[RMDB]
RNA sequence: GGGAACGACUCGAGUAGAGUCGAAAAUCACAGCGUGUUGUACAGAGUUUUUCCUUAUGACAUGGAUUCUGGUGUGUCAUCCUUUAGUGAACUACUUUUUGAUUGCGUUGAUCUUUCAGUAGCUUCUGCCACCGAUAGUUCGCUAUCGGUAAAAGAAACAACAACAACAAC
Reactivity to 2A3 in 0.01 (KOAc 150mM, MgCl2 10mM, bicine 150mM(pH8.5), 24C), signal-to-noise 9, nucleotides 027 to 129: u120c020a020c020a040g050c040g030u050g010u030u050g060u030a030c100a100g040a050g030u020u030u020u080u070c010c000u060u060a070u090g040a020c020a060u070g080g050a110u140u070c030u090g060g000u040g010u000g020u070c020a050u060c010c000u090u100u110a090g030u100g080a050a010c010u030a020c020u070u060u030u050u110g080a120u020u070g080c110g080u080u170g050a060u030c010u020u040u020c020a030g020u050a020g030c030u030u010c010u020g040c020c030
Reactivity to DMS in 0.01 (KOAc 150mM, MgCl2 10mM, bicine 150mM(pH8.5), 24C), signal-to-noise 9, nucleotides 027 to 129: u040c020a120c080a070g000c080g000u010g000u020u000g010u000a080c120a100g000a060g020u000u000u000u000u000c020c030u020u020a060u000g010a040c100a060u020g000g000a160u000u000c060u030g000g000u040g020u020g020u040c080a060u010c080c040u010u010u020a060g030u000g000a050a060c060u010a030c060u000u000u000u000u000g030a060u010u010g000c240g000u010u000g000a040u000c030u010u020u010c030a080g020u010a020g000c070u020u010c030u000g000c190c160
Source: RMDB library 15KLIB, as collected in RNAgym. This 170-nucleotide RNA was probed chemically with 2A3 and DMS. 2A3 adducts were read by reverse transcription with SuperScript II with manganese. The RNA was probed in 150 mM KOAc, 10 mM MgCl2 and 150 mM bicine (pH 8.5) at 24 C.